Source information: The record gives the reactivity of an RNA of 177 nucleotides to 2A3. For 2A3 the reverse transcriptase was SuperScript II with manganese.

RNA sequence: GGGAACGACUCGAGUAGAGUCGAAAACUCAUAUCUGACUGAAAUAGAAUUUUGUUCUUCCAUGAUGUAAUUUAGUCAAAUAAGAGGAGACAAGACAUAGUGAAAACCAUAUUCCUAGCUCGCCAUGGAGAUGUCCCUGGUUCGCCAGGGACAUCUCAAAAGAAACAACAACAACAAC
Reactivity to 2A3 in 0.01 (KOAc 150mM, MgCl2 10mM, bicine 150mM(pH8.5), 24C), signal-to-noise 1, nucleotides 027 to 126: c000u000c000a060u000a000u060c110u090g030a020c000u050g020a000a050a080u090a230g120a050a030u000u000u000u280g220u000u000c000u100u010c020c030a020u120g030a000u060g200u160a220a040u070u070u140a000g000u050c000a020a000a000u290a150a040g030a000g000g000a000g000a000c060a000a130g020a000c000a030u250a140g080u200g140a000a000a000a000c060c020a010u020a050u020u000c000c000u000a020g000c020u020c000g050c080c000a020u060g060

The reactions ran in a buffer of 150 mM KOAc, 10 mM MgCl2 and 150 mM bicine (pH 8.5), at 24 C. Reactivities are given for positions 27 through 126.